Structure probing data (2A3 and DMS) for a 177-nucleotide construct. 2A3 adducts were read by reverse transcription with SuperScript II with manganese. It was measured as part of the RMDB library M2PK90. The reactions ran in a buffer of 150 mM KOAc, 10 mM MgCl2 and 150 mM bicine (pH 8.5), at 24 C.

RNA sequence: GGGAACGACUCGAGUAGAGUCGAAAAUAAAAGCGCGAAAAAGAUCGAUCGAUCGUUUGAACGCGCAAGUCUUAGUUUGAUACGGGCAUACUAGCUAGCUAGCUAGCAAAACAAACUUAGUAAAAAAUACUUACCAUGUGUUCGCACAUGGUAAGUAAAAAGAAACAACAACAACAAC
Reactivity to 2A3 in 0.01 (KOAc 150mM, MgCl2 10mM, bicine 150mM(pH8.5), 24C), signal-to-noise 1, nucleotides 027 to 126: u230a000a100a020a040g020c020g010c000g040a050a030a030a000a030g010a000u020c050g040a190u200c140g000a020u030c040g050u000u080u140g020a050a020c000g030c000g020c010a000a010g040u020c000u040u030a020g030u020u010u000g110a110u200a130c020g050g050g000c040a030u050a150c000u020a010g000c000u000a060g130c030u020a000g030c000u040a020g060c060a020a020a040a000c000a000a020a000c030u040u140a050g030u140a160a030a000a000a000a160
Reactivity to DMS in 0.01 (KOAc 150mM, MgCl2 10mM, bicine 150mM(pH8.5), 24C), signal-to-noise 2, nucleotides 027 to 126: u020a070a110a190a140g030c020g040c000g020a030a070a010a020a040g000a010u000c000g000a120u010c300g010a000u000c000g000u000u000u000g000a130a120c010g000c010g030c010a060a040g000u000c000u000u000a020g000u020u020u000g010a060u010a170c170g000g000g020c150a110u000a080c020u000a010g010c000u020a180g000c180u000a050g010c010u000a010g000c030a010a060a080a050c030a020a000a010c010u000u000a020g030u020a000a020a090a070a020a080

For DMS, 1,422 sequencing reads were counted. For DMS the reverse transcriptase was MarathonRT.